This 177-nucleotide RNA was probed chemically with DMS and 2A3. The reactions ran in a buffer of 150 mM KOAc, 10 mM MgCl2 and 150 mM bicine (pH 8.5), at 24 C.
RNA sequence: GGGAACGACUCGAGUAGAGUCGAAAACACAGGGAGGGGACUGGGCCACCCACCUUGAGCAGCAUGCGGCACUGCUUGGGGAAGGUCAGGAAGCAGGGCACCAGCACGCUGAUGUGCCGCAGCACGGCAAACUAUGCUUGUUCGCAAGCAUAGUUUGAAAAGAAACAACAACAACAAC
Reactivity to DMS in 0.01 (KOAc 150mM, MgCl2 10mM, bicine 150mM(pH8.5), 24C), signal-to-noise 6, nucleotides 027 to 126: c100a130c080a080g010g010g010a120g010g010g000g000a090c090u000g010g000g010c050c090a100c040c020c060a150c030c020u000u010g010a030g010c020a010g000c050a100u000g000c020g000g010c020a160c010u000g000c000u000u010g010g010g010g000a090a080g000g000u000c090a070g000g000a090a070g010c080a080g000g000g000c040a060c060c030a060g010c060a070c110g010c050u010g000a080u010g010u000g010c000c010g000c020a060g010c090a090c130g000g000
Reactivity to 2A3 in 0.01 (KOAc 150mM, MgCl2 10mM, bicine 150mM(pH8.5), 24C), signal-to-noise 3, nucleotides 027 to 126: c090a000c040a020g050g020g020a100g020g030g000g030a020c060u060g020g050g000c030c010a050c030c010c010a040c000c010u050u060g030a020g010c010a000g010c030a070u100g010c010g020g000c020a010c010u020g010c000u020u030g000g000g000g020a070a050g040g010u090c040a040g000g090a040a030g040c050a030g000g050g000c030a020c050c010a020g010c030a010c070g040c030u090g040a170u110g040u050g020c000c030g000c020a000g000c040a020c040g060g000